The data come from the RNA Mapping Database (RMDB), library OK2TST. Structure probing data (DMS and 2A3) for a 177-nucleotide construct. The RNA was probed in 150 mM KOAc, 10 mM MgCl2 and 150 mM bicine (pH 8.5) at 24 C. The DMS profile rests on 5,545 reads.
RNA sequence: GGGAACGACUCGAGUAGAGUCGAAAACCUAUGUUCAUCCCUUCAGGUGUUUCAAUAGGGCAAAUUCUACCGUACUGAGAAUAAUGCACAUCACGGAUAUCUAAAUUAGGGUCCUCUCUUGAUAUUCAUACUAGGCAUCAUUCGUGAUGCCUAGUAUAAAAGAAACAACAACAACAAC
Reactivity to DMS in 0.01 (KOAc 150mM, MgCl2 10mM, bicine 150mM(pH8.5), 24C), signal-to-noise 5, nucleotides 027 to 126: c010c010u020a070u000g010u000u000c060a080u010c030c030c050u000u010c110a090g020g010u000g000u000u000u000c080a090a090u010a080g010g010g010c070a030a080a100u000u000c050u000a060c040c080g000u010a080c070u000g010a080g010a040a060u010a100a080u010g010c060a050c040a070u000c080a050c170g000g000a040u000a020u000c020u000a040a050a080u000u000a080g000g010g010u000c040c070u000c040u000c030u010u000g000a070u000a060u010u010c090
Reactivity to 2A3 in 0.01 (KOAc 150mM, MgCl2 10mM, bicine 150mM(pH8.5), 24C), signal-to-noise 2, nucleotides 027 to 126: c000c000u010a090u050g100u000u060c040a060u090c010c050c000u070u010c000a060g080g000u040g050u070u110u130c130a130a070u080a140g000g000g010c030a040a050a040u040u010c020u030a060c060c000g050u060a070c020u090g040a010g020a120a040u190a120a040u100g050c040a030c010a070u030c000a000c080g020g000a050u040a040u010c050u070a020a090a140u140u130a080g020g000g050u000c000c020u030c000u000c000u010u050g020a040u060a040u120u090c010